[RMDB]
RNA sequence: GGGAACGACUCGAGUAGAGUCGAAAAGAUAUGGACGGGAUAGACAUGCUGUGUCGGAAACGACAUCAGCAACAGCUAUUCGUCCUAAGUCAAAAGGAAAGGAUGUCGUUCGCGACAUCCUUUCCAAUCAUGUGUCGUAGUUCGCUACGACACAUGAAAAAGAAACAACAACAACAAC
Reactivity to 2A3 in 0.01 (KOAc 150mM, MgCl2 10mM, bicine 150mM(pH8.5), 24C), signal-to-noise 2, nucleotides 027 to 126: g020a000u040a020u070g020g000a000c100g030g090g060a010u020a010g090a140c090a140u080g000c010u000g010u000g000u020c010g000g050a040a010a000c020g040a000c000a020u290c030a040g000c000a010a040c030a040g000c000u000a010u000u020c010g010u020c010c000u010a020a020g030u030c040a020a020a060a110g000g000a000a000a000g000g000a000u010g000u000c010g020u080u190c300g030c010g140a010c000a000u010c000c000u010u020u000c000c000a010a000
Reactivity to DMS in 0.01 (KOAc 150mM, MgCl2 10mM, bicine 150mM(pH8.5), 24C), signal-to-noise 3, nucleotides 027 to 126: g010a040u000a270u010g000g010a010c010g040g030g010a010u000a010g010a090c090a280u000g030c000u010g020u000g010u000c010g020g000a060a030a100c000g020a020c000a010u000c030a000g020c000a010a030c300a130g000c000u000a000u000u000c000g000u000c000c000u000a020a090g010u000c030a080a070a170a110g000g000a010a000a010g020g010a010u000g000u000c010g020u000u030c200g020c000g010a010c000a000u000c000c000u000u000u000c000c010a020a040

Background: Structure probing data (2A3 and DMS) for a 177-nucleotide construct. The RNA was probed in 150 mM KOAc, 10 mM MgCl2 and 150 mM bicine (pH 8.5) at 24 C. Source: RMDB library TTRDEL, as collected in RNAgym.